Source: RMDB library M2PK90, as collected in RNAgym.
Chemical mapping of a 177-nucleotide RNA with DMS and 2A3.
For DMS, 1,426 sequencing reads were counted.
[RMDB]
RNA sequence: GGGAACGACUCGAGUAGAGUCGAAAAAAUAUGCUCGACAGGCUGCCUGUCCCACAGAGCUUUUAGAUCUUCUGAUCUUUCCCUGCAGCAUAUCGCUUAUGCAUCAAGCGAUUGUCGGAUCACACAACGAUAGUUGCUCUUUCGAGAGCAACUAUCGAAAAGAAACAACAACAACAAC
Reactivity to DMS in 0.01 (KOAc 150mM, MgCl2 10mM, bicine 150mM(pH8.5), 24C), signal-to-noise 2, nucleotides 027 to 126: a070a070u010a040u000g000c050u000c040g020a080c120a110g030g000c090u000g000c030c080u000g000u000c000c070c020a130c110a080g000a060g010c030u000u000u000u000a020g000a010u000c020u010u010c300u020g010a030u000c000u000u000u000c010c000c010u000g020c080a140g000c000a050u000a020u000c000g020c010u000u000a070u010g020c140a080u010c120a040a020g000c000g020a010u000u000g010u000c060g040g020a140u000c070a060c100a060c180a070a070
Reactivity to 2A3 in 0.01 (KOAc 150mM, MgCl2 10mM, bicine 150mM(pH8.5), 24C), signal-to-noise 1, nucleotides 027 to 126: a000a000u290a020u070g000c000u010c020g020a020c010a020g000g040c080u060g150c000c020u010g050u060c010c000c000a040c040a020g040a010g000c000u040u050u010u020a000g000a000u010c000u240u010c160u300g000a000u000c000u000u020u000c000c000c000u000g110c040a050g000c010a030u050a010u140c010g000c030u010u040a060u200g130c070a090u110c070a050a010g040c010g000a000u020u070g020u020c040g040g020a070u140c030a020c000a000c000a230a100